Overview: This 177-nucleotide RNA was probed chemically with DMS and 2A3. It was measured as part of the RMDB library OK1LIB. For 2A3 the reverse transcriptase was SuperScript II with manganese. The 2A3 profile rests on 73,661 reads.
RNA sequence: GGGAACGACUCGAGUAGAGUCGAAAAGCUAGCCUGCGCACGAUCUGACUGCCGUGAAGUCUAGCCUGCGUCAGAACCAGUCUCCAUCAAUCAAAGCGCAGGGAUUGAUGUACGAGACUAGUACACAGUGUAAGGUCUUCUUCGGAGGACUUUACACAAAAGAAACAACAACAACAAC
Reactivity to DMS in 0.01 (KOAc 150mM, MgCl2 10mM, bicine 150mM(pH8.5), 24C), signal-to-noise 9, nucleotides 027 to 126: g010c030u010a040g010c020c010u000g010c010g020c010a160c130g000a060u020c040u010g010a080c050u010g000c040c020g010u000g000a080a090g010u000c020u000a060g000c020c020u000g010c080g010u010c080a070g000a110a070c070c040a040g000u000c000u000c010c010a010u000c010a000a000u000c010a050a080a110g020c020g010c010a020g000g010g000a000u000u000g000a010u000g010u050a110c180g000a010g010a020c000u000a060g020u020a080c130a090c190a140
Reactivity to 2A3 in 0.01 (KOAc 150mM, MgCl2 10mM, bicine 150mM(pH8.5), 24C), signal-to-noise 9, nucleotides 027 to 126: g030c030u030a010g020c000c000u010g000c010g000c010a040c040g060a070u040c030u080g080a060c030u040g040c020c010g030u040g060a080a010g050u010c020u030a010g000c000c010u040g020c010g080u060c040a030g030a070a050c030c010a020g000u000c000u000c000c000a000u000c000a000a010u000c010a050a060a050g020c020g000c010a010g000g000g000a000u000u000g000a000u000g020u060a090c080g000a000g000a000c000u010a010g050u080a020c100a020c040a070